[RMDB]
Chemical mapping of a 177-nucleotide RNA with DMS and 2A3. For DMS, 82,195 sequencing reads were counted. Source: RMDB library OK2TRN, as collected in RNAgym. Reactivities are given for positions 27 through 126.
RNA sequence: GGGAACGACUCGAGUAGAGUCGAAAAGAUCGAGGUCUGCCCACUUCCUCAUAUAUCCUAUCCACGGCAGACUUCGAAAGGCAUGAGAAUGAGGAAGUGGUGGAUAGGAUAUUUCUCAUGCCUCACACUACACGUAACUAUUCGUAGUUGCGUGUAGAAAAGAAACAACAACAACAAC
Reactivity to DMS in 0.01 (KOAc 150mM, MgCl2 10mM, bicine 150mM(pH8.5), 24C), signal-to-noise 9, nucleotides 027 to 126: g000a100u000c010g000a020g000g000u000c010u000g010c010c010c090a070c050u000u000c000c000u000c010a090u010a090u000a050u000c000c000u000a030u000c020c020a100c170g010g010c010a010g000a020c000u000u000c010g000a010a060a020g010g010c010a010u000g000a020g000a040a060u000g000a030g000g000a030a020g010u010g020g030u010g010g010a030u000a010g000g000a040u000a040u000u000u000c000u000c000a010u000g000c000c010u000c090a070c220a210
Reactivity to 2A3 in 0.01 (KOAc 150mM, MgCl2 10mM, bicine 150mM(pH8.5), 24C), signal-to-noise 9, nucleotides 027 to 126: g070a020u040c000g000a000g010g010u000c000u000g000c000c010c010a020c030u040u020c000c000u010c070a000u060a010u010a000u130c000c000u000a010u010c020c030a080c110g010g000c010a000g000a000c000u010u000c000g010a060a030a000g010g010c000a000u010g000a000g010a030a050u110g000a010g020g020a030a040g010u030g050g120u080g010g000a020u010a010g000g000a000u000a030u020u080u000c000u000c000a000u000g000c000c000u020c000a030c000a000